[RMDB]
RNA sequence: GGGAACGACUCGAGUAGAGUCGAAAAUAUGACUGGUGGUAUGGCUUCUAAGGCUGCAAAUAUCGCUCAGCAAGCUUGGGAUCUGGGUGCGAAAGCGAUUGCCUCUAUCAAGAGUGCUAUUGAUUCACACUCUCCAUCAAAGGAAUCUCGUAAACUCCUUGUUGCAGAGAUUCGUCUCUGCAACAAGAAAAGAAACAACAACAACAAC
Reactivity to 2A3 in 0.01 (KOAc 150mM, MgCl2 10mM, bicine 150mM(pH8.5), 24C), signal-to-noise 4, nucleotides 027 to 156: u290a050u060g060a080c030u020g010g020u030g020g020u110a060u080g040g010c040u080u020c070u160a090a100g110g000c020u050g030c060a010a120a040u160a060u070c090g030c050u100c040a030g020c030a040a050g040c010u060u080g020g010g000a010u030c030u100g010g000g000u040g020c020g030a020a010a030g250c010g000a000u000u040g000c010c000u000c020u060a240u150c080a140a090g000a000g030u240g010c000u020a000u010u060g020a050u020u040c010a010c000a030c030u000c000u000c040c020a140u120c020a080a070a010g040g020a080a080u050c040u040c040g110u190a110a080a090c040u080c090
Reactivity to DMS in 0.01 (KOAc 150mM, MgCl2 10mM, bicine 150mM(pH8.5), 24C), signal-to-noise 1, nucleotides 027 to 156: u000a120u000g010a160c050u000g020g050u020g000g030u000a050u000g020g000c020u010u010c100u010a120a070g040g000c000u010g000c020a090a110a100u000a060u030c060g050c010u030c060a170g040c040a060a070g030c030u000u000g010g010g010a070u030c030u010g000g030g020u010g010c000g010a060a110a070g040c050g030a060u000u000g030c010c000u000c010u000a160u000c220a110a060g010a040g000u000g030c000u010a180u000u000g000a240u000u010c040a030c020a030c020u000c000u020c030c030a070u000c040a010a050a070g010g010a090a080u000c030u000c000g010u000a080a050a100c010u000c030
Source: RMDB library OK3TST, as collected in RNAgym. The record gives the reactivity of an RNA of 207 nucleotides to 2A3 and DMS. DMS adducts were read by reverse transcription with MarathonRT. The RNA was probed in 150 mM KOAc, 10 mM MgCl2 and 150 mM bicine (pH 8.5) at 24 C.